An RNA of 207 nucleotides, treated with 2A3 and DMS and read out base by base. It was measured as part of the RMDB library OK3TST. For DMS the reverse transcriptase was MarathonRT. The reactions ran in a buffer of 150 mM KOAc, 10 mM MgCl2 and 150 mM bicine (pH 8.5), at 24 C.
RNA sequence: GGGAACGACUCGAGUAGAGUCGAAAAAGAAGCAUUAAAUGAAUCCUUGGAAGUUAAGUUUAAACUGUCGCGUACUCAAGCAACGAGUAAUAUGAUUGCUUUUGAUGCAUCUGGACGGAUCAAGAAGUAUGACAGUGUUGAAGAUAUUUUGACCGAAGAGUGAUACUCAGUUCGCUGAGUAUCACUCAAAAGAAACAACAACAACAAC
Reactivity to 2A3 in 0.01 (KOAc 150mM, MgCl2 10mM, bicine 150mM(pH8.5), 24C), signal-to-noise 2, nucleotides 027 to 156: a000g080a020a000g020c020a000u110u180a060a100a160u100g010a090a050u060c030c060u060u060g020g010a040a010g030u120u060a040a020g010u060u030u270a130a110a020c020u010g000u010c060g000c030g090u000a040c030u010c000a000a120g000c000a000a070c040g040a000g080u090a070a030u160a080u290g160a200u000u140g000c000u060u130u040u070g040a060u050g000c020a030u000c040u030g090g050a030c030g010g030a010u020c000a000a070g030a130a000g040u130a030u110g030a000c010a010g000u020g020u050u050g000a030a050g020a030u020a150u100u180u080u130g040a030c020c100g050a050a080
Reactivity to DMS in 0.01 (KOAc 150mM, MgCl2 10mM, bicine 150mM(pH8.5), 24C), signal-to-noise 1, nucleotides 027 to 156: a120g010a040a040g000c010a070u000u000a030a090a100u010g010a140a020u000c040c040u000u020g010g010a080a050g030u010u000a070a150g010u000u020u020a010a080a060c040u010g030u000c050g000c080g030u000a060c030u020c040a100a100g030c040a040a030c080g020a080g020u000a120a070u000a080u000g010a100u030u000g000c000u000u000u000u000g010a080u000g030c030a050u030c070u000g010g010a130c070g020g000a080u020c000a050a070g010a050a090g000u000a040u000g020a020c010a090g000u000g010u000u010g010a030a120g000a200u010a030u010u000u000u010g010a240c080c000g010a100a240
The DMS profile rests on 1,928 reads.